An RNA of 177 nucleotides, treated with 2A3 and DMS and read out base by base.
RNA sequence: GGGAACGACUCGAGUAGAGUCGAAAAGAUAUGGAUCGCGAGGAUCUUGGAAACGGCGAUCGGAAACGAUCGACCCCUCGCCAAGGGAGCGAUCCUAAGUCAAAACUUCUACCUUCGGGUAGAAGAACUUUGUUCAUUUGUUCGCAAAUGAACAAAGAAAAGAAACAACAACAACAAC
Reactivity to 2A3 in 0.01 (KOAc 150mM, MgCl2 10mM, bicine 150mM(pH8.5), 24C), signal-to-noise 3, nucleotides 027 to 126: g040a020u060a050u150g000g010a000u000c000g000c030g060a240g050g010a010u000c010u020u010g040g000a070a110a020c060g010g020c010g010a010u000c000g010g010a100a110a020c020g020a000u030c000g300a300c010c020c020c000u110c090g000c020c000a010a000g000g000g000a010g000c020g000a000u000c000c000u000a070a010g030u010c040a010a000a120a230c010u000u020c000u000a010c000c010u030u070c300g150g000g000u000a010g010a000a010g000a000a010
Reactivity to DMS in 0.01 (KOAc 150mM, MgCl2 10mM, bicine 150mM(pH8.5), 24C), signal-to-noise 4, nucleotides 027 to 126: g020a040u000a300u000g000g000a010u000c010g010c000g000a060g020g000a020u010c000u000u000g020g010a050a110a170c300g000g000c020g000a020u010c000g010g010a100a100a190c010g000a000u000c000g000a180c020c010c070c180u010c300g000c010c000a010a000g010g010g000a020g020c010g000a010u010c000c000u000a010a090g010u000c050a070a060a090a070c000u000u000c000u000a000c000c000u000u010c250g020g010g020u000a010g000a000a000g000a070a110

About this RNA: High DMS reactivity at an A or C suggests that its Watson-Crick edge is free. Conditions: 150 mM KOAc, 10 mM MgCl2 and 150 mM bicine (pH 8.5), 24 C. For DMS, 2,622 sequencing reads were counted.